[RMDB]
RNA sequence: GGGAACGACUCGAGUAGAGUCGAAAAGAUAUGGAGGUAGAGCAACAGCAGGUCGGUCGGAAACGACCGCCUGACAUGCUUGUACUCCUAAGUCAGGCCACUGAAGAUGUUCGCAUCUUCAGUGGAAGAUUCUCGAGACGUUCGCGUCUCGAGAAUCAAAAGAAACAACAACAACAAC
Reactivity to DMS in 0.01 (KOAc 150mM, MgCl2 10mM, bicine 150mM(pH8.5), 24C), signal-to-noise 1, nucleotides 027 to 126: g020a050u000a300u010g000g000a030g000g000u040a300g000a010g030c000a030a050c300a140g000c000a010g000g020u010c070g010g000u000c000g000g000a070a060a120c000g000a010c000c000g000c010c000u000g000a020c140a070u000g010c000u000u000g010u000a300c000u000c000c000u000a040a090g000u000c010a300g000g000c010c000a000c000u000g040a000a000g000a000u000g010u000u010c240g000c040a000u000c010u000u000c000a010g000u000g010g020a010a030